[RMDB]
RNA sequence: GGGAACGACUCGAGUAGAGUCGAAAAUCUGCUAGGUGUGGCACAGGCUACGAGCCUGUGCUGUGCCGUAGGGAAGCCGUGAAGCAGACCGCCUGGGAAGUACGUCCGCAAGGAUGAAACUUAAAGGACUUGGGAUUGAUUUCGAUCAAUCCCAAGUAAAAGAAACAACAACAACAAC
Reactivity to 2A3 in 0.01 (KOAc 150mM, MgCl2 10mM, bicine 150mM(pH8.5), 24C), signal-to-noise 2, nucleotides 027 to 126: u000c000u000g020c000u020a070g020g000u010g000u000g030g030c000a000c000a000g000g000c000u110a120c300g050a040g010c000c000u030g000u000g000c000u000g000u000g000c000c000g000u030a020g000g010g000a060a020g150c000c000g030u080g050a000a000g000c000a000g000a010c000c010g020c000c000u070g000g060g080a030a000g030u030a000c020g000u000c010c000g040c070a040a030g020g000a000u000g030a110a000a000c010u030u040a080a100a080g120g000
Reactivity to DMS in 0.01 (KOAc 150mM, MgCl2 10mM, bicine 150mM(pH8.5), 24C), signal-to-noise 2, nucleotides 027 to 126: u010c020u020g010c000u010a170g010g030u000g020u000g000g000c000a020c000a010g000g020c000u010a160c300g020a150g010c000c000u010g000u000g000c010u000g000u000g060c000c000g000u020a070g010g000g000a070a040g010c040c000g000u010g010a080a240g000c010a020g000a040c020c040g000c020c020u000g010g000g000a040a000g010u000a070c030g010u000c030c000g030c300a070a130g020g010a000u000g020a090a080a010c030u000u010a060a110a060g000g010